[RMDB]
RNA sequence: GGGAACGACUCGAGUAGAGUCGAAAAGAUAUGGAGCACUACAGACAUGUACCUCGGAAACGAGGUCACAACAGCUGUUUUGCUCCUAAGUCAAAGACUUGAUGAUGCUUCGGCAUCAUCAAGUCAAGUUCUCAUAUAGCUUCGGCUAUAUGAGAACAAAAGAAACAACAACAACAAC
Reactivity to 2A3 in 0.01 (KOAc 150mM, MgCl2 10mM, bicine 150mM(pH8.5), 24C), signal-to-noise 3, nucleotides 027 to 126: g000a000u020a010u070g000g000a000g010c020a000c000u030a010c000a080g170a180c070a130u030g000u020a000c000c000u000c000g000g000a000a020a010c000g000a010g030g000u010c020a000c010a030a060c060a080g170c010u000g000u000u010u000u000g000c000u000c000c000u000a000a000g020u010c030a080a080a110g000a000c010u010u010g000a000u000g000a010u000g010c020u060u110c300g130g000c010a000u010c000a000u000c000a000a000g010u000c000a000a000
Reactivity to DMS in 0.01 (KOAc 150mM, MgCl2 10mM, bicine 150mM(pH8.5), 24C), signal-to-noise 3, nucleotides 027 to 126: g030a020u000a140u000g000g000a000g000c000a000c020u000a000c000a000g000a280c090a140u000g000u000a040c010c000u000c010g000g000a020a040a070c000g010a020g000g000u000c150a010c010a010a070c270a070g020c010u000g000u000u000u000u000g000c000u010c000c000u000a000a030g000u000c010a130a100a100g000a010c000u010u000g010a010u000g010a010u000g000c000u000u010c220g030g000c000a000u000c000a000u000c000a000a000g010u000c000a010a060
Source: RMDB library TTRDEL, as collected in RNAgym. Structure probing data (2A3 and DMS) for a 177-nucleotide construct. For 2A3, 11,134 sequencing reads were counted. DMS adducts were read by reverse transcription with MarathonRT.